[RMDB]
RNA sequence: GGGAACGACUCGAGUAGAGUCGAAAAUUUGCUAUCUGGGUACAACUCCAAGCCUGCUGUGAAGUUGACCCACCUUAGACUAACUCCACUGUAUCCACAGGUGAUAGGGCAUGAACAGAAGGGAUCACUAACGAAUGUGCUUCGGCACAUUCGUUAGAAAAGAAACAACAACAACAAC
Reactivity to DMS in 0.01 (KOAc 150mM, MgCl2 10mM, bicine 150mM(pH8.5), 24C), signal-to-noise 1, nucleotides 027 to 126: u010u000u010g020c020u000a000u010c030u000g030g010g000u000a170c000a020a040c020u000c040c030a030a090g040c050c080u010g020c080u000g010u010g010a010a030g060u000u000g020a070c020c000c010a010c080c070u000u000a010g040a180c110u000a050a110c040u000c030c010a060c070u020g050u000a050u000c060c020a060c020a100g010g000u000g000a090u010a060g020g020g050c040a030u010g000a040a070c050a040g000a130a090g000g000g040a070u000c090a170
Reactivity to 2A3 in 0.01 (KOAc 150mM, MgCl2 10mM, bicine 150mM(pH8.5), 24C), signal-to-noise 1, nucleotides 027 to 126: u050u050u080g050c030u040a100u110c050u020g000g000g070u090a190c000a000a000c020u070c020c000a050a020g040c040c050u130g040c010u040g130u100g130a050a020g000u010u010g000a020c000c000c000a000c000c020u070u050a030g080a140c000u100a080a000c000u020c010c040a030c050u030g010u040a110u010c010c040a050c010a090g030g000u040g020a100u100a070g010g000g000c030a020u090g030a010a010c020a040g070a030a030g060g020g010a000u070c050a020
Notes: This 177-nucleotide RNA was probed chemically with DMS and 2A3. Source: RMDB library OK2TST, as collected in RNAgym. DMS adducts were read by reverse transcription with MarathonRT. Conditions: 150 mM KOAc, 10 mM MgCl2 and 150 mM bicine (pH 8.5), 24 C. For 2A3, 1,043 sequencing reads were counted. For 2A3 the reverse transcriptase was SuperScript II with manganese. For DMS, 1,048 sequencing reads were counted.